[RMDB]
RNA sequence: GGGAACGACUCGAGUAGAGUCGAAAAAGUCGCAAACGACGACAACUACGCUCAGGGCGCGCUGGCAGCGUAACAACUGCUAGCUUCUAGUCCGGCCCGGAGGUGAUGUGCCCAUUCAUCACCGAUGGGAUACGAGCUCAGACUGAUGGGAUCGCGGGGUUAUUCUUUCGUUCGCGAAAGAAUAACCAAAAGAAACAACAACAACAAC
Reactivity to 2A3 in 0.01 (KOAc 150mM, MgCl2 10mM, bicine 150mM(pH8.5), 24C), signal-to-noise 1, nucleotides 027 to 156: a000g050u030c030g000c050a090a190a140c130g240a070c010g010a020c030a100a110c040u290a090c100g000c000u010c000a070g000g000g010c000g010c000g000c020u000g010g020c000a000g000c000g050u050a040a000c020a010a020c000u000g000c000u000a000g000c000u050u050c020u010a000g010u000c000c000g000g000c010c010c000g000g000a020g000g000u000g000a000u000g020u010g000c020c000c000a000u010u050c000a000u010c000a000c000c000g010a010u020g000g000g000a010u050a030c100g000a000g040c020u030c060a100g050a120c070u000g060a010u000g000g040g020a020u130c100g060c100g070g120

Structure probing data (2A3) for a 207-nucleotide construct. 2A3 adducts were read by reverse transcription with SuperScript II with manganese. Values cover nucleotides 27 to 156. 2A3 is a SHAPE reagent: it acylates the 2'-hydroxyl of flexible nucleotides of all four kinds.